[RMDB]
Structure probing data (2A3 and DMS) for a 177-nucleotide construct. It was measured as part of the RMDB library VIROID. DMS (dimethyl sulfate) methylates the pairing face of unpaired adenines and cytosines. The RNA was probed in 150 mM KOAc, 10 mM MgCl2 and 150 mM bicine (pH 8.5) at 24 C. 2A3 adducts were read by reverse transcription with SuperScript II with manganese. Values cover nucleotides 27 to 126.

RNA sequence: GGGAACGACUCGAGUAGAGUCGAAAAUGGAGAAUUCUGCCUUAAGAAGCAGCUCCGAGAAAACGAGGAACGGAAAGAAUCCUCAAGGUACAUGUCUUAUUCCUAGCAGAAGGGGGGAGCGAGCUGACUUAGUAAUACGGUUCGCCGUAUUACUAAGAAAAGAAACAACAACAACAAC
Reactivity to 2A3 in 0.01 (KOAc 150mM, MgCl2 10mM, bicine 150mM(pH8.5), 24C), signal-to-noise 4, nucleotides 027 to 126: u180g020g010a050g020a050a230u200u000c010u030g000c010c000u100u080a170a050g050a050a010g030c000a010g010c000u000c000c020g000a060g020a020a060a000a010c070g000a000g010g020a020a050c050g060g160a230a100a030g060a060a100u020c010c000u010c020a010a020g060g000u070a040c020a080u090g040u030c000u050u050a050u070u040c010c010u030a030g020c040a030g030a120a060g020g000g010g000g000g000a020g000c030g000a010g030c010u010g010a030
Reactivity to DMS in 0.01 (KOAc 150mM, MgCl2 10mM, bicine 150mM(pH8.5), 24C), signal-to-noise 6, nucleotides 027 to 126: u010g000g010a010g010a280a120u010u020c030u000g000c010c020u000u010a150a110g020a130a270g000c020a070g020c020u000c010c010g010a120g010a050a050a100a110c180g000a020g010g000a020a080c110g010g010a070a100a120g010a110a060u000c000c000u010c010a060a040g010g020u000a070c130a060u000g010u010c040u000u010a160u010u000c010c010u000a080g010c070a040g020a060a090g000g010g010g010g000g000a080g020c060g000a070g020c040u000g000a210